[RMDB]
RNA sequence: GGGAACGACUCGAGUAGAGUCGAAAAAAUUUAGAUUAUCCAGGUGUAGCGGUGAAAUUCGUAGAGAUCUGGUGCAUAAUGAACCGGUGGCGAAGGCGAAAGAUAACCGCUGAAAUGCUGAAGUGAACUUAACUUUGGUCUUCGGACCAAAGUUAAGAAAAGAAACAACAACAACAAC
Reactivity to DMS in 0.01 (KOAc 150mM, MgCl2 10mM, bicine 150mM(pH8.5), 24C), signal-to-noise 1, nucleotides 027 to 126: a020a000u000u000u000a060g020a150u020u010a020u000c030c000a080g000g000u000g030u000a020g000c020g030g000u000g000a040a120a030u020u020c010g010u000a150g000a120g040a090u000c010u000g010g000u000g000c030a100u010a080a100u000g000a100a050c020c030g000g010u000g000g010c300g000a110a190g000g000c000g000a030a000a020g010a060u000a160a080c020c000g020c010u000g000a030a050a090u000g000c000u000g010a100a180g000u000g000a100a190
Background
Source: RMDB library M2PK90, as collected in RNAgym. The record gives the reactivity of an RNA of 177 nucleotides to DMS. Values cover nucleotides 27 to 126.